This 177-nucleotide RNA was probed chemically with 2A3 and DMS. The data come from the RNA Mapping Database (RMDB), library OK1LIB. Conditions: 150 mM KOAc, 10 mM MgCl2 and 150 mM bicine (pH 8.5), 24 C. The DMS profile rests on 1,067 reads.
RNA sequence: GGGAACGACUCGAGUAGAGUCGAAAACUAUUUAUAGACAGAACAGUGGAAAACGUAUAUCGCUAUAAACCUUAGACCCCGAGUCUUCCAGUCGUACCAUUCCACAUAGGCGAGGCAUAAGCGAAAGCACCAUGACCGUGUUCGCACGGUCAUGGUGAAAAGAAACAACAACAACAAC
Reactivity to 2A3 in 0.01 (KOAc 150mM, MgCl2 10mM, bicine 150mM(pH8.5), 24C), signal-to-noise 2, nucleotides 027 to 126: c000u030a080u000u050u090a110u000a040g030a030c070a010g110a190a000c010a040g030u070g160g110a080a150a000a000c030g050u050a030u000a000u170c040g010c030u000a000u030a040a080a030c000c030u040u110a010g000a040c040c000c000c030g000a000g000u000c000u010u000c000c000a000g030u010c040g000u040a060c000c000a070u050u050c000c000a030c050a160u060a090g040g070c030g000a030g020g000c020a110u090a130a040g000c000g020a180a010a000g030
Reactivity to DMS in 0.01 (KOAc 150mM, MgCl2 10mM, bicine 150mM(pH8.5), 24C), signal-to-noise 1, nucleotides 027 to 126: c040u020a110u040u070u000a150u000a070g000a100c110a190g000a000a050c020a040g020u000g000g020a060a040a160a120c030g020u000a060u060a160u000c010g000c040u000a050u000a080a000a130c160c070u000u000a020g000a060c040c020c000c050g000a030g000u000c000u000u020c020c010a050g000u030c000g080u000a010c110c000a220u000u010c030c020a040c030a060u070a020g000g000c120g030a060g000g000c110a240u000a010a080g080c040g010a100a090a120g080